[RMDB]
RNA sequence: GGGAACGACUCGAGUAGAGUCGAAAAGUUAGGCGAGGCUCCUAUACAAACACAGGUUGCUGAUCUGACGACGUCGAGAGACGCCCAAGAUUAGGACAGGAUAUAUCGACCCAAGGUAUAUCCCCAUAAAACUCGGAACACUUCGGUGUUCCGAGAACAAUGUGAAUCGCUUCGGCGAUUCACAUUGAAAAGAAACAACAACAACAAC
Reactivity to 2A3 in 0.01 (KOAc 150mM, MgCl2 10mM, bicine 150mM(pH8.5), 24C), signal-to-noise 1, nucleotides 027 to 156: g020u050u050a010g000g080c130g070a130g080g000c080u070c090c000u090a120u100a240c110a010a180a020c080a020c050a080g180g020u070u200g100c030u020g020a070u000c030u040g000a030c020g000a000c020g000u030c020g000a010g020a020g000a110c000g010c000c000c000a010a000g030a050u050u050a010g060g010a030c120a060g000g000a000u000a000u000a000u000c000g050a140c000c000c000a060a060g020g000u010a000u000a000u010c000c000c000c000a080u270a140a080a050a000c000u000c000g010g000a000a000c000a000c020u030u210c250g130g010u000g010u000u000c000c020g030a000g000a000a010
Reactivity to DMS in 0.01 (KOAc 150mM, MgCl2 10mM, bicine 150mM(pH8.5), 24C), signal-to-noise 1, nucleotides 027 to 156: g020u010u000a050g010g000c000g010a160g010g010c210u020c020c000u040a070u030a240c130a010a040a130c050a050c110a030g040g000u000u000g000c030u030g010a020u000c000u000g050a170c010g000a030c010g010u000c000g020a300g020a300g050a050c000g010c000c000c130a150a100g000a040u000u000a060g000g010a200c070a010g010g000a020u000a020u000a030u020c000g010a110c010c060c040a140a090g010g000u040a010u000a010u000c010c000c110c040a080u000a070a090a050a150c020u000c000g000g000a060a020c000a010c000u000u020c270g060g000u000g030u000u000c000c000g000a010g020a000a070